[RMDB]
RNA sequence: GGGAACGACUCGAGUAGAGUCGAAAAACGAUGUCGUUCGCGACAUCGUAAAUUGUAUAACCUUGCUUGAAGUCUACUUGGUUGUAAAGGGAGACAAGUCAGUGAGAGUCCUAUUCGUAGGACUCAAGAUGAGUCCACUUUUCGAAGUGGACUCAUCAAAAGAAACAACAACAACAAC
Reactivity to DMS in 0.01 (KOAc 150mM, MgCl2 10mM, bicine 150mM(pH8.5), 24C), signal-to-noise 3, nucleotides 027 to 126: a040c000g010a000u000g010u000c010g010u010u010c220g030c000g010a020c000a000u010c000g010u000a020a040a060u000u000g000u020a100u000a150a150c020c010u000u000g000c020u000u010g000a050a090g010u000c000u000a100c010u000u000g000g000u010u010g020u010a050a030a060g010g000g010a090g000a150c020a030a030g020u000c070a080g030u000g000a170g010a020g010u000c010c000u000a030u000u000c190g020u010a000g010g010a020c000u010c000a030a060
Reactivity to 2A3 in 0.01 (KOAc 150mM, MgCl2 10mM, bicine 150mM(pH8.5), 24C), signal-to-noise 2, nucleotides 027 to 126: a000c000g000a000u020g000u000c020g040u050u020c180g030c030g050a010c000a000u010c000g020u000a010a000a000u080u050g140u030a090u020a140a050c000c000u000u040g040c000u030u070g050a210a030g040u070c000u020a140c030u150u010g100g070u150u170g130u230a100a090a050g030g020g000a040g010a020c020a030a030g060u030c020a040g000u020g220a170g000a000g070u010c000c000u040a020u040u060c250g020u030a000g010g000a000c010u000c000a010a020
Conditions: 150 mM KOAc, 10 mM MgCl2 and 150 mM bicine (pH 8.5), 24 C.
Chemical mapping of a 177-nucleotide RNA with DMS and 2A3.
Values are in units of 0.01, from 0 to 300, in steps of 10.
Source: RMDB library M2PK50, as collected in RNAgym.